[RMDB]
RNA sequence: GGGAACGACUCGAGUAGAGUCGAAAAUAAGCACCUCGUUAGGUGAGGCGGCUACACGAACAUAGGCCACUGACCCCGAACGUCGAGAGACGCCCCGGGUCAGGACAGCUCUUCCCGGCUUAAGGUUAAAAUCACAACGUCUUCGGACGUUGUGAAACAUUACAGAUGACUUCGGUCAUCUGUAAUGAAAAGAAACAACAACAACAAC
Reactivity to DMS in 0.01 (KOAc 150mM, MgCl2 10mM, bicine 150mM(pH8.5), 24C), signal-to-noise 2, nucleotides 027 to 156: u000a110a120g030c020a070c000c000u000c050g000u000u010a100g020g050u010g020a070g010g030c030g040g030c000u000a090c120a120c080g010a070a100c020a170u000a090g040g020c000c030a180c030u010g020a050c010c010c000c030g020a070a040c020g010u000c000g000a300g000a300g000a020c000g010c030c020c050c250g000g010g000u000c020a020g000g000a060c050a060g000c060u000c010u000u030c010c000c010g010g020c020u010u000a090a130g010g030u010u000a070a080a080a130u000c000a030c010a020a010c000g040u000c000u000u000c280g040g010a010c000g030u010u000g030u000g010a010a050a100
Reactivity to 2A3 in 0.01 (KOAc 150mM, MgCl2 10mM, bicine 150mM(pH8.5), 24C), signal-to-noise 4, nucleotides 027 to 156: u160a040a000g010c000a000c000c010u010c040g100u110u300a140g010g120u170g060a020g010g010c070g040g010c020u090a070c100a020c130g170a210a020c040a160u200a110g000g070c030c010a050c000u000g000a010c020c000c000c080g030a070a030c000g000u000c010g010a010g010a010g000a150c000g030c010c040c020c000g010g000g020u000c000a000g000g040a010c020a000g000c020u000c030u040u000c020c020c000g010g020c040u130u120a110a050g030g020u030u090a060a050a030a070u030c000a000c010a000a000c000g000u000c000u060u070c160g130g000a000c020g000u000u000g000u000g000a000a000a000